RNA sequence: GGGAACGACUCGAGUAGAGUCGAAAAUGAGGAACGCGUAGUAAGCUUUGAGCGGAUUCGAAAGGAUCUCCUUACUAUGGAUGUUGGUGAAAUAACUUUAAGCGACCCGUCUUGAAACACGGACCAAUUCGGUGUUAGAAUUCGUUCUAACACCGAAAAAAGAAACAACAACAACAAC
Reactivity to DMS in 0.01 (KOAc 150mM, MgCl2 10mM, bicine 150mM(pH8.5), 24C), signal-to-noise 2, nucleotides 027 to 126: u070g060a100g050g000a070a090c070g040c000g110u000a020g000u000a020a000g000c290u040u020u020g000a160g000c190g010g000a000u000u000c020g050a140a090a190g010g040a000u000c020u010c070c000u000u000a030c000u000a040u020g020g010a080u000g010u000u020g010g040u020g000a040a080a090u040a040a110c040u020u010u000a130a080g000c130g010a070c120c020c010g000u010c000u000u010g000a150a110a150c270a060c080g020g000a130c000c060a030a140
Reactivity to 2A3 in 0.01 (KOAc 150mM, MgCl2 10mM, bicine 150mM(pH8.5), 24C), signal-to-noise 2, nucleotides 027 to 126: u160g100a170g030g000a080a000c060g000c030g030u000a000g040u000a000a000g000c050u210u220u300g100a000g010c190g020g030a000u000u030c030g030a120a000a000g000g020a000u000c000u030c010c000u000u020a000c000u000a000u040g230g000a100u040g000u000u000g040g130u150g100a080a100a040u300a070a150c000u040u070u070a150a000g020c060g020a140c060c000c000g000u000c010u010u270g250a100a080a000c010a000c040g000g000a060c000c000a080a080

Chemical mapping of a 177-nucleotide RNA with DMS and 2A3. For DMS the reverse transcriptase was MarathonRT.